The record gives the reactivity of an RNA of 177 nucleotides to DMS and 2A3. For 2A3 the reverse transcriptase was SuperScript II with manganese. Reactivities are given for positions 27 through 126. For 2A3, 10,343 sequencing reads were counted.
RNA sequence: GGGAACGACUCGAGUAGAGUCGAAAAUUACACCAGAAAUGUAUGCCAUGAUAAGCACUGUCCCUCCAACAGUAGAGGGUAUUAUUUCUGGUGCCGCUGGGACAGCUCAUAUUCUUCAAACUAUUGACACUACGUAUGAUUUCGAUCAUACGUAGUGAAAAGAAACAACAACAACAAC
Reactivity to DMS in 0.01 (KOAc 150mM, MgCl2 10mM, bicine 150mM(pH8.5), 24C), signal-to-noise 7, nucleotides 027 to 126: u000u010a280c010a020c000c000a010g010a000a030a010u000g010u000a030u000g020c010c020a100u010g020a130u010a120a170g000c120a040c070u010g000u000c040c020c020u000c050c050a170a090c070a050g000u000a080g020a080g000g010g020u000a000u010u000a020u000u000u000c010u000g000g010u000g020c080c090g010c050u010g000g000g010a070c080a050g020c040u000c070a080u000a090u000u000c020u000u000c080a080a070a120c180u010a120u000u000g000a300
Reactivity to 2A3 in 0.01 (KOAc 150mM, MgCl2 10mM, bicine 150mM(pH8.5), 24C), signal-to-noise 7, nucleotides 027 to 126: u130u070a020c010a010c000c000a000g050a010a020a000u090g030u140a020u050g040c020c030a080u130g060a140u230a170a060g090c030a020c050u040g050u100c050c020c000u040c030c030a090a100c010a060g060u110a040g040a070g080g010g020u010a010u030u020a000u000u010u000c000u000g010g010u010g020c000c020g020c020u040g020g000g070a030c010a050g030c020u020c070a080u090a080u140u080c050u100u090c060a070a110a090c080u120a130u140u160g030a030